[RMDB]
RNA sequence: GGGAACGACUCGAGUAGAGUCGAAAAGAUAUGGACGAGGUGUAGGCAAUGAUGGUGGGUCGGAAACGACCCACUUGAGCCUCCCCCACACUCGUCCUAAGUCAAAACGUACUGUUCGCAGUACGAACCCUAGUCCCAGGUUCGCCUGGGACUAGGGAAAAGAAACAACAACAACAAC
Reactivity to DMS in 0.01 (KOAc 150mM, MgCl2 10mM, bicine 150mM(pH8.5), 24C), signal-to-noise 1, nucleotides 027 to 126: g010a060u000a180u000g010g010a000c010g000a050g010g020u010g050u000a010g040g020c050a250a190u020g040a090u020g060g010u000g010g010g050u000c000g000g000a030a000a070c020g000a000c000c000c000a000c000u000u000g000a090g100c010c000u000c070c070c030c130c210a100c150a070c100u000c000g000u010c000c000u000a020a160g020u010c040a080a040a130a120c010g000u030a000c000u000g010u000u000c270g000c000a000g000u000a020c020g000a020a080